[RMDB]
RNA sequence: GGGAACGACUCGAGUAGAGUCGAAAAGUAUGGAUGCCACCGUGACGGCUCAAUCACACAAGUGCCAACGAUAACGAGGCGCUCGCUAUUGCUGCGUAACUGACGGCCGGACGGUCUGACGUUACAAAAAACGAAAAGUGGUUCGCCACUUUUCGAAGUUAAUACUCAUGUUCGCAUGAGUAUUAACAAAAGAAACAACAACAACAAC
Reactivity to 2A3 in 0.01 (KOAc 150mM, MgCl2 10mM, bicine 150mM(pH8.5), 24C), signal-to-noise 8, nucleotides 027 to 156: g070u070a080u170g030g040a050u080g040c030c030a030c020c020g030u030g070a110c030g010g000c020u030c080a060a110u130c030a040c010a010c020a140a060g020u020g000c010c010a090a040c060g060a100u090a160a030c050g020a060g120g030c060g040c060u030c010g020c030u050a060u140u220g040c050u060g010c030g030u020a040a020c020u020g030a020c030g000g000c000c000g080g100a050c090g010g000u000c020u010g020a010c020g010u010u040a040c030a020a050a010a020a010a010c010g000a000a000a000a000g000u010g020g020u030u040c130g020c040c000a000c000u000u010u000u000c000g000a030a000
Reactivity to DMS in 0.01 (KOAc 150mM, MgCl2 10mM, bicine 150mM(pH8.5), 24C), signal-to-noise 3, nucleotides 027 to 156: g010u000a070u000g020g020a070u010g010c030c010a100c050c070g000u010g010a110c030g020g040c030u000c040a090a080u000c040a120c080a060c110a080a090g070u000g010c040c000a010a130c070g010a110u000a040a110c040g000a190g020g040c110g040c020u000c020g000c010u000a040u000u000g020c010u010g000c010g010u000a030a090c020u020g010a300c300g000g020c010c000g010g010a100c100g050g010u010c010u010g020a300c200g010u010u000a070c030a000a050a050a020a090a160c010g000a010a010a010a000g040u000g020g010u000u000c300g010c030c000a010c000u000u000u000u000c000g020a020a060
Structure probing data (2A3 and DMS) for a 207-nucleotide construct. As a SHAPE reagent, 2A3 marks flexible, mostly unpaired nucleotides at the ribose 2'-OH. The data come from the RNA Mapping Database (RMDB), library M2RFPK.